[RMDB]
RNA sequence: GGGAACGACUCGAGUAGAGUCGAAAAUCUUAAGGCGUUUGUUAUAACGAUUUUUCAUGAUCUUCAUAACUGAACAUUGUUAAAAAAUAUUUUAACUCAUACAACUGUUCUCUCGUAUUGGGUGUUAGCCUAAUUAAAUGUUCGCAUUUAAUUAGGCAAAAGAAACAACAACAACAAC
Reactivity to 2A3 in 0.01 (KOAc 150mM, MgCl2 10mM, bicine 150mM(pH8.5), 24C), signal-to-noise 3, nucleotides 027 to 126: u010c020u070u100a110a040g160g020c030g040u030u100u060g030u060u080a050u000a130a000c020g000a020u000u000u020u160u170c050a060u290g010a030u010c000u060u000c020a030u030a080a030c030u060g040a030a010c020a050u160u130g040u130u150a040a120a000a030a100a110u210a230u110u130u100u070a080a010c000u000c060a020u030a060c010a060a060c070u030g020u070u020c030u000c000u000c050g020u030a060u030u150g040g000g030u060g030u120u140a000
Reactivity to DMS in 0.01 (KOAc 150mM, MgCl2 10mM, bicine 150mM(pH8.5), 24C), signal-to-noise 4, nucleotides 027 to 126: u010c070u010u010a060a150g010g020c080g030u000u000u010g000u010u010a020u000a040a110c120g010a030u010u010u000u020u030c210a070u020g010a020u000c020u000u010c230a030u010a020a040c050u000g020a020a030c020a070u000u010g000u000u010a000a010a060a100a130a130u010a080u010u000u010u010a060a030c010u000c040a050u010a050c050a070a090c100u010g000u000u000c030u000c030u010c110g000u000a040u010u010g010g000g010u000g000u010u000a110